This 207-nucleotide RNA was probed chemically with 2A3 and DMS. It was measured as part of the RMDB library RNAMAK. Values cover nucleotides 27 to 156. The reactions ran in a buffer of 150 mM KOAc, 10 mM MgCl2 and 150 mM bicine (pH 8.5), at 24 C.

[RMDB]
RNA sequence: GGGAACGACUCGAGUAGAGUCGAAAAGCGUACUACUAACGAUUGUAUCGCUUGGAUUUAUAUGGAAUCUGGUCCCAAAUAGGACCAGACUCCAUAUUGUCAGCGAUACAAAUCGUUAGUAUCGCAAAACUUAUAGGACGUUCGCGUCCUAUAAGAACACCAUUCUAUACUUCGGUAUAGAAUGGUGAAAAGAAACAACAACAACAAC
Reactivity to 2A3 in 0.01 (KOAc 150mM, MgCl2 10mM, bicine 150mM(pH8.5), 24C), signal-to-noise 6, nucleotides 027 to 156: g010c010g030u100a100c050u010a000c000u000a030a010c000g010a010u010u000g000u000a000u010c000g010c030u060u090g050g000a020u060u300u080a020u020a000u000g000g000a010a010u000c000u000g000g010u030c010c020c040a160a280a160u300a110g000g000a000c000c000a000g000a010c000u000c000c010a000u000a000u000u010g010u010c000a010g000c000g000a000u000a000c000a010a000a000u000c000g000u000u010a000g010u000a000u010c000g000c000a040a040a000a060c000u000u000a000u000a000g000g010a010c010g030u020u040c280g050c000g130u020c000c000u000a000u000a000a000g000a010a000
Reactivity to DMS in 0.01 (KOAc 150mM, MgCl2 10mM, bicine 150mM(pH8.5), 24C), signal-to-noise 2, nucleotides 027 to 156: g030c020g020u010a050c070u000a010c010u000a000a010c020g010a050u000u000g010u000a020u000c000g000c000u000u000g040g020a040u000u000u000a020u000a000u000g000g000a040a000u000c000u000g010g000u000c000c000c020a060a160a260u000a060g000g020a030c000c000a010g000a000c000u000c010c010a010u000a000u000u000g020u000c020a070g000c000g010a020u000a000c000a020a030a040u000c030g030u000u000a010g030u000a010u000c020g010c000a090a060a110a150c010u000u000a010u000a000g000g010a030c010g030u000u010c300g030c030g010u000c010c000u010a010u000a000a010g000a110a270